[RMDB]
RNA sequence: GGGAACGACUCGAGUAGAGUCGAAAAAUGACCAAAGGGUUCUAAGUGAUAAUCCUGGGUUCACUGAAGCUGUGGUAUAUUAAAGAUGGAAGGGUUCUCAGUGGCACAUUUCCUCGCCUGCACUACAGCAGAGUAGCUAAUUCGUUAGCUACUCUGCAAAAGAAACAACAACAACAAC
Reactivity to DMS in 0.01 (KOAc 150mM, MgCl2 10mM, bicine 150mM(pH8.5), 24C), signal-to-noise 2, nucleotides 027 to 126: a070u000g000a120c020c020a050a110a030g000g010g010u010u000c070u010a120a120g030u020g000a100u000a050a040u000c020c030u010g020g000g000u000u000c030a050c040u020g010a090a060g010c050u000g000u010g010g000u000a050u020a070u000u010a080a050a120g000a090u000g020g020a140a080g000g010g010u010u000c080u010c070a090g030u010g010g000c120a050c130a060u000u000u000c020c010u030c110g000c070c040u000g000c130a100c070u000a050c170a110
Reactivity to 2A3 in 0.01 (KOAc 150mM, MgCl2 10mM, bicine 150mM(pH8.5), 24C), signal-to-noise 2, nucleotides 027 to 126: a000u030g030a020c000c010a120a180a000g040g000g000u040u050c020u140a150a060g110u080g170a100u110a240a020u020c040c010u040g010g030g000u040u080c010a040c050u050g040a030a010g000c010u020g000u050g100g030u100a080u000a030u200u260a100a100a040g120a040u110g020g070a050a040g070g030g000u040u000c060u020c060a050g040u050g060g010c020a010c000a050u010u030u060c020c000u010c000g000c000c000u020g030c060a020c110u130a080c010a010